[RMDB]
RNA sequence: GGGAACGACUCGAGUAGAGUCGAAAAGGGUAGAAUUUAUAUGUCUUUGGCACGUAAAGAUAUUGAUACCAUUUAUAAAUUAAAACAAGCAUCAAUGGAAUUAGGCUUUUAUGAUGCUAUUCCAGAAAGGAUAUAGUGCGUUCGCGCACUAUAUCCUAAAAGAAACAACAACAACAAC
Reactivity to DMS in 0.01 (KOAc 150mM, MgCl2 10mM, bicine 150mM(pH8.5), 24C), signal-to-noise 1, nucleotides 027 to 126: g000g010g070u010a000g000a270a090u000u020u040a070u000a060u030g000u030c050u020u000u000g000g010c170a100c140g040u000a010a040a060g000a000u020a000u000u000g020a300u000a010c020c080a090u020u000u000a080u040a040a000a110u020u000a030a080a030a070c050a050a080g000c000a000u000c020a060a000u010g000g000a020a080u000u020a070g000g030c300u020u040u000u010a100u010g000a020u000g030c000u000a140u010u000c000c010a150g020a120a080
Reactivity to 2A3 in 0.01 (KOAc 150mM, MgCl2 10mM, bicine 150mM(pH8.5), 24C), signal-to-noise 2, nucleotides 027 to 126: g060g000g000u050a000g040a190a080u010u010u040a030u060a030u010g080u060c060u000u010u000g190g030c160a100c300g020u030a010a010a010g020a000u020a030u080u080g040a000u010a100c000c000a000u000u070u000a200u080a130a190a060u100u070a110a100a020a070c070a060a050g000c020a000u090c190a150a090u130g070g120a010a080u210u110a120g010g140c040u120u000u020u080a190u170g180a000u030g000c000u010a140u070u020c000c000a020g020a070a120
This 177-nucleotide RNA was probed chemically with DMS and 2A3.
DMS adducts were read by reverse transcription with MarathonRT.
The DMS profile rests on 1,225 reads.
Conditions: 150 mM KOAc, 10 mM MgCl2 and 150 mM bicine (pH 8.5), 24 C.
2A3 adducts were read by reverse transcription with SuperScript II with manganese.